[RMDB]
Source information: Structure probing data (2A3 and DMS) for a 177-nucleotide construct. The RNA was probed in 150 mM KOAc, 10 mM MgCl2 and 150 mM bicine (pH 8.5) at 24 C. For 2A3, 1,313 sequencing reads were counted. DMS adducts were read by reverse transcription with MarathonRT.

RNA sequence: GGGAACGACUCGAGUAGAGUCGAAAAUUUGGACGCCACGAUCAGGUACGCGUCGCCGUCGCGAGCAUAGGUGAGUGACGUGGUUCGCGGCUGGCUCGUCUUGGCGCCGGUGGUAUGCAGCAGCAAAUCUUCCCCACUCAUUCGUGAGUGGGGAAGAAAAAGAAACAACAACAACAAC
Reactivity to 2A3 in 0.01 (KOAc 150mM, MgCl2 10mM, bicine 150mM(pH8.5), 24C), signal-to-noise 1, nucleotides 027 to 126: u080u050u030g080g030a050c030g000c010c020a020c070g050a030u050c010a020g110g060u190a120c000g000c000g020u030c020g040c040c010g010u000c010g000c010g030a020g000c030a130u150a220g130g220u070g100a020g030u050g040a030c060g070u080g060g160u080u060c000g000c030g010g000c010u060g040g000c030u000c000g000u000c030u040u060g040g000c020g030c020c000g010g000u040g020g020u030a040u150g060c030a030g040c010a010g000c030a040a000a150
Reactivity to DMS in 0.01 (KOAc 150mM, MgCl2 10mM, bicine 150mM(pH8.5), 24C), signal-to-noise 2, nucleotides 027 to 126: u000u000u000g010g050a120c040g000c000c010a030c080g000a040u020c050a100g010g000u000a080c090g050c060g000u000c070g020c050c020g010u000c010g020c000g030a170g020c020a160u010a120g000g010u010g020a270g000u000g000a030c030g020u000g020g020u000u000c030g020c010g000g010c000u010g000g030c080u000c070g000u000c080u010u000g030g030c050g030c040c040g000g020u020g010g010u000a070u010g000c030a050g010c050a090g000c100a050a090a160

It was measured as part of the RMDB library OK2TST.